[RMDB]
This 170-nucleotide RNA was probed chemically with 2A3 and DMS. It was measured as part of the RMDB library 15KLIB. Reactivities are given for positions 27 through 129. Values are in units of 0.01, from 0 to 300, in steps of 10.

RNA sequence: GGGAACGACUCGAGUAGAGUCGAAAACCCCCCUGCGGGGCCCCCCCAUAAGAUGGCGAGAUCUCCACUCAUUGGGUCCUUCGUCCAUCUCCUUUUCUUACCUUUGGCCGGCAUGGUCCCAGCCUCCUACGAGGGACGUUCGCGUCCCUCAAAAGAAACAACAACAACAAC
Reactivity to 2A3 in 0.01 (KOAc 150mM, MgCl2 10mM, bicine 150mM(pH8.5), 24C), signal-to-noise 2, nucleotides 027 to 129: c010c000c000c000c000c000u010g010c100g020g000g000g040c000c000c000c000c000c000c000a100u180a140a020g030a060u060g020g010c010g000a020g000a010u020c180u080c060c020a050c050u120c040a100u060u190g020g000g020u050c030c020u050u060c000g070u020c000c020a010u030c040u000c010c000u040u080u090u090c020u030u070a160c050c010u010u010u110g010g000c060c000g000g000c010a010u050g000g010u030c000c010c000a010g050c000c000u030c000c000u040a070c070
Reactivity to DMS in 0.01 (KOAc 150mM, MgCl2 10mM, bicine 150mM(pH8.5), 24C), signal-to-noise 2, nucleotides 027 to 129: c000c020c000c000c000c050u060g070c150g090g000g050g110c000c010c020c030c010c000c020a080u020a300a000g020a050u000g020g060c010g020a150g010a110u010c160u020c040c050a030c150u050c140a170u070u040g000g000g070u020c070c050u030u030c000g090u050c010c010a030u000c040u070c110c080u070u000u000u020c050u000u040a090c000c010u000u000u010g010g010c040c050g000g130c060a040u010g000g040u050c020c000c010a130g030c000c100u060c000c040u000a050c050